[RMDB]
RNA sequence: GGGAACGACUCGAGUAGAGUCGAAAACUCAAACUGGUUAACGGACUUGACAAAGCUUUGAUACCUACCAGGGGGUGAGAAGAGACAAGGGCGCUACCAGCUAGUUAAACCAACAGCAAAGCUUAUACUAAGUGCUGUGAACCAUCUUAAGAGAUGACUACGUAUCCAUGUUCGCAUGGAUACGUAGAAAAGAAACAACAACAACAAC
Reactivity to DMS in 0.01 (KOAc 150mM, MgCl2 10mM, bicine 150mM(pH8.5), 24C), signal-to-noise 2, nucleotides 027 to 156: c000u000c040a110a080a100c020u000g010g010u010u010a060a130c060g010g000a130c030u000u030g010a120c130a080a090a190g010c020u010u000u000g020a290u000a110c000c030u000a250c100c130a110g030g020g050g000g050u000g000a170g030a080a100g010a200g000a170c040a040a090g010g000g030c020g010c000u000a070c040c020a050g000c030u000a080g020u000u000a040a100a160c050c020a040a050c010a040g000c020a050a110a050g020c010u000u000a110u000a030c090u010a090a100g030u000g000c010u000g050u000g000a060a080c010c010a030u000c000u000u000a100a140g000a070g040a090u000g010a300
Reactivity to 2A3 in 0.01 (KOAc 150mM, MgCl2 10mM, bicine 150mM(pH8.5), 24C), signal-to-noise 6, nucleotides 027 to 156: c040u030c000a060a060a040c040u040g020g020u080u090a060a010c020g030g070a020c060u040u030g030a060c100a050a130a020g020c020u060u050u010g050a060u160a140c000c020u070a120c070c100a140g130g000g050g000g000u040g040a080g010a020a030g010a010g010a000c020a020a020g030g030g130c030g010c010u020a030c000c010a010g000c030u040a020g030u040u070a090a070a050c030c030a020a040c010a020g010c020a060a100a040g030c040u160u110a110u080a220c100u100a080a030g030u060g120c010u000g000u010g040a010a020c010c000a010u000c030u090u170a070a040g050a000g000a110u030g030a030

An RNA of 207 nucleotides, treated with DMS and 2A3 and read out base by base. For DMS the reverse transcriptase was MarathonRT. For DMS, 3,713 sequencing reads were counted. Conditions: 150 mM KOAc, 10 mM MgCl2 and 150 mM bicine (pH 8.5), 24 C.